The data come from the RNA Mapping Database (RMDB), library RNAMAK. An RNA of 207 nucleotides, treated with DMS and 2A3 and read out base by base. For DMS the reverse transcriptase was MarathonRT. For DMS, 2,220 sequencing reads were counted.
[RMDB]
RNA sequence: GGGAACGACUCGAGUAGAGUCGAAAAAGUUGGGUUCGCCCAACUCUGGACUCCUAAGUCUCGCUUUUGACGACUUCAGCUAUGAAGUAUCGGAAACGAUAUGGAGUGGGAAGUCGAUAAGCGAGAUAUGGACAUAUUCCUUCUUUCGAGAAGGAAAUGAAAGAAAUGGGUUCGCCCAUUUCUUUCAAAAAGAAACAACAACAACAAC
Reactivity to DMS in 0.01 (KOAc 150mM, MgCl2 10mM, bicine 150mM(pH8.5), 24C), signal-to-noise 1, nucleotides 027 to 156: a060g010u000u020g030g010g020u000u000c300g040c010c010c010a020a010c030u010c020u010g020g000a140c080u000c000c030u020a090a210g040u000c010u000c000g030c000u010u030u000u000g000a300c080g000a030c010u000u000c030a150g000c020u000a090u000g000a250a300g030u000a010u000c020g000g020a130a110a230c000g000a040u000a030u000g000g010a300g020u000g010g060g020a030a030g030u000c000g020a140u000a020a040g020c000g000a020g040a020u000a050u000g000g000a160c070a070u000a170u000u000c010c040u000u000c000u000u010u010c220g040a100g000a020a030g000g010a000a010a070
Reactivity to 2A3 in 0.01 (KOAc 150mM, MgCl2 10mM, bicine 150mM(pH8.5), 24C), signal-to-noise 3, nucleotides 027 to 156: a000g040u040u000g040g020g030u080u130c260g130c000c010c000a000a010c000u000c040u090g150g050a080c050u020c000c000u030a110a030g020u000c000u000c010g030c020u070u050u110u280g170a100c030g000a000c000u010u000c000a160g070c050u080a050u230g020a030a000g010u000a010u000c000g010g060a140a090a080c010g000a000u000a000u040g010g000a010g010u030g000g100g000a000a010g010u000c000g020a040u020a020a000g000c000g000a000g000a000u010a000u010g010g000a000c010a080u250a150u080u080c060c000u000u020c000u010u110u090c240g150a040g030a010a000g000g000a010a060a030